An RNA of 177 nucleotides, treated with DMS and 2A3 and read out base by base. The DMS profile rests on 2,876 reads. Source: RMDB library OK1LIB, as collected in RNAgym. 2A3 adducts were read by reverse transcription with SuperScript II with manganese. Reactivities are rounded to 0.1 and cut off at 0 and 3. For DMS the reverse transcriptase was MarathonRT. Conditions: 150 mM KOAc, 10 mM MgCl2 and 150 mM bicine (pH 8.5), 24 C.
RNA sequence: GGGAACGACUCGAGUAGAGUCGAAAACAAAAAGGUGUACCUCUACCUCGCCGAAUACCUUCCAUCGGAUGUGGCUCAGUCAGCUUCCUCUGUUGCUCUGGGAUACAGCAAUGGCGGUGGCAGCAACGACCAUAUCGGGAUUCGUCCCGAUAUGGUCAAAAGAAACAACAACAACAAC
Reactivity to DMS in 0.01 (KOAc 150mM, MgCl2 10mM, bicine 150mM(pH8.5), 24C), signal-to-noise 2, nucleotides 027 to 126: c060a050a080a050a040a060g000g000u000g020u060a040c080c020u000c060u000a030c030c000u010c000g000c000c000g010a250a080u050a030c070c010u000u000c030c020a100u040c010g010g000a010u000g040u020g010g010c000u010c040a130g000u010c040a120g000c000u000u000c030c020u000c040u000g030u020u010g000c040u000c080u020g000g030g010a200u050a040c090a000g030c070a060a040u010g000g010c180g000g020u030g000g000c020a080g000c090a090a090c190
Reactivity to 2A3 in 0.01 (KOAc 150mM, MgCl2 10mM, bicine 150mM(pH8.5), 24C), signal-to-noise 6, nucleotides 027 to 126: c070a020a090a030a030a010g050g010u070g020u100a100c010c020u010c020u050a060c010c010u040c020g050c020c020g060a050a060u180a150c000c020u050u060c050c010a080u050c050g070g020a030u050g060u060g070g000c000u000c030a040g070u020c020a010g000c010u040u040c000c030u050c020u060g020u020u010g010c010u000c050u060g030g030g040a050u120a130c060a010g010c030a030a060u040g040g000c000g000g000u020g040g000c000a020g020c050a080a060c080